The data come from the RNA Mapping Database (RMDB), library TTRDEL. Chemical mapping of a 177-nucleotide RNA with DMS and 2A3. 2A3 adducts were read by reverse transcription with SuperScript II with manganese. The RNA was probed in 150 mM KOAc, 10 mM MgCl2 and 150 mM bicine (pH 8.5) at 24 C. High DMS reactivity at an A or C suggests that its Watson-Crick edge is free.

[RMDB]
RNA sequence: GGGAACGACUCGAGUAGAGUCGAAAAGAUAUGGAUGGAGAUACCCCAGAGCGCCACUCGGAAACGAGUGGGAAGCUCUGAGCGUAUCGUUGAAAUCCUAAGUCAAACAUCACGUUCGCGUGAUGAAGACUUAAUUUGGGUUCGCCCAAAUUAAGUCAAAAGAAACAACAACAACAAC
Reactivity to DMS in 0.01 (KOAc 150mM, MgCl2 10mM, bicine 150mM(pH8.5), 24C), signal-to-noise 4, nucleotides 027 to 126: g000a040u000a300u010g000g010a010u000g000g000a110g010a010u000a010c000c010c010c000a010g000a010g030c000g010c000c000a010c000u000c000g010g000a140a100a180c010g010a010g020u000g000g010g000a030a050g000c000u010c000u010g010a010g000c270g010u000a000u000c000g000u000u010g000a130a090a040u000c000c000u010a070a110g000u000c020a170a140a250c010a000u000c000a010c010g020u000u020c220g030c010g020u000g010a000u000g000a080a140
Reactivity to 2A3 in 0.01 (KOAc 150mM, MgCl2 10mM, bicine 150mM(pH8.5), 24C), signal-to-noise 2, nucleotides 027 to 126: g050a020u050a040u190g000g010a000u010g030g020a050g000a020u010a000c000c000c000c040a000g000a000g020c300g190c020c000a000c000u000c000g000g030a070a090a040c010g000a000g000u010g000g000g010a090a010g010c000u000c000u010g000a000g020c110g010u010a000u020c020g030u080u020g030a020a020a000u020c020c010u030a100a010g090u040c050a070a020a060c000a010u000c010a010c020g020u060u070c300g020c000g130u010g000a010u010g040a040a050